[RMDB]
RNA sequence: GGGAACGACUCGAGUAGAGUCGAAAACUGGAUUCUUUCGAGAAUCCAGCAUGUCUAGUCGCUUGCGAACGAUCAACGCUAGCGACUAGACUUUAUUGAUCGCAUUUGCCUCUUUCGAGAGGCAAAACUAAAGGAGUAGGUUCGCCUACUCCUUUAGAAAAGAAACAACAACAACAAC
Reactivity to DMS in 0.01 (KOAc 150mM, MgCl2 10mM, bicine 150mM(pH8.5), 24C), signal-to-noise 7, nucleotides 027 to 126: c000u000g000g000a020u000u000c010u000u010u020c130g010a020g010a010a000u000c000c000a010g010c100a060u000g010u000c000u000a000g010u000c000g020c000u000u000g010c000g010a090a100c150g010a100u010c150a100a070c000g000c000u000a010g010c000g010a010c000u000a000g000a000c000u000u000u000a060u010u010g010a090u000c090g020c250a200u000u000u000g010c000c000u000c000u000u000u010c200g010a020g010a000g010g000c000a010a000a020a140
Reactivity to 2A3 in 0.01 (KOAc 150mM, MgCl2 10mM, bicine 150mM(pH8.5), 24C), signal-to-noise 2, nucleotides 027 to 126: c000u000g010g000a010u010u010c020u010u110u100c190g080a010g000a010a000u000c000c000a000g020c010a060u070g010u000c000u000a000g020u000c000g000c010u030u050g000c030g090a160a040c060g110a170u180c060a000a060c000g000c000u010a010g030c000g000a000c000u000a010g000a000c000u000u020u010a010u000u040g080a050u130c100g000c170a080u020u000u020g000c010c000u050c000u060u070u200c300g070a000g000a000g030g000c000a000a000a000a000
Chemical mapping of a 177-nucleotide RNA with DMS and 2A3. It was measured as part of the RMDB library M2PK50. The reactions ran in a buffer of 150 mM KOAc, 10 mM MgCl2 and 150 mM bicine (pH 8.5), at 24 C. For DMS the reverse transcriptase was MarathonRT. Reactivities are rounded to 0.1 and cut off at 0 and 3.